[RMDB]
RNA sequence: GGGAACGACUCGAGUAGAGUCGAAAAUAACGGACUAGGAAACUCGUUCUUUUAAGUGGUAAUCCUAGCGAAUCCACGGCGAGGAAACUAGGACACUAACCAUGUGAUCCCGGACGCUAGAAGAAAACGAGUGAAUUAUAUUCGUAUAAUUCACUCGAAAAGAAACAACAACAACAAC
Reactivity to DMS in 0.01 (KOAc 150mM, MgCl2 10mM, bicine 150mM(pH8.5), 24C), signal-to-noise 6, nucleotides 027 to 126: u010a050a080c110g010g000a100c020u000a010g020g010a110a140a180c030u000c010g010u000u000c140u000u000u010u010a080a130g040u000g000g010u000a120a130u000c040c010u000a020g000c040g010a290a120u000c000c000a040c040g010g000c040g010a030g000g000a070a090a110c010u000a020g000g010a100c050a030c110u010a090a120c110c090a060u000g000u000g010a110u000c010c000c010g000g010a100c050g000c020u000a010g010a210a110g010a050a040a050a140
Reactivity to 2A3 in 0.01 (KOAc 150mM, MgCl2 10mM, bicine 150mM(pH8.5), 24C), signal-to-noise 6, nucleotides 027 to 126: u090a040a030c040g030g030a040c010u020a020g040g060a120a150a040c010u020c010g040u070u070c000u120u290u070u150a280a050g000u000g020g010u030a050a050u030c020c010u000a020g010c020g030a010a030u010c000c020a020c040g040g010c030g010a010g000g030a090a090a010c000u000a010g000g050a010c020a000c070u050a060a050c020c020a050u120g030u030g050a070u020c010c000c000g010g040a020c020g010c030u030a020g040a080a010g050a030a200a020a020

About this RNA
Chemical mapping of a 177-nucleotide RNA with DMS and 2A3. The DMS profile rests on 6,264 reads. 2A3 adducts were read by reverse transcription with SuperScript II with manganese. The data come from the RNA Mapping Database (RMDB), library M2PK90.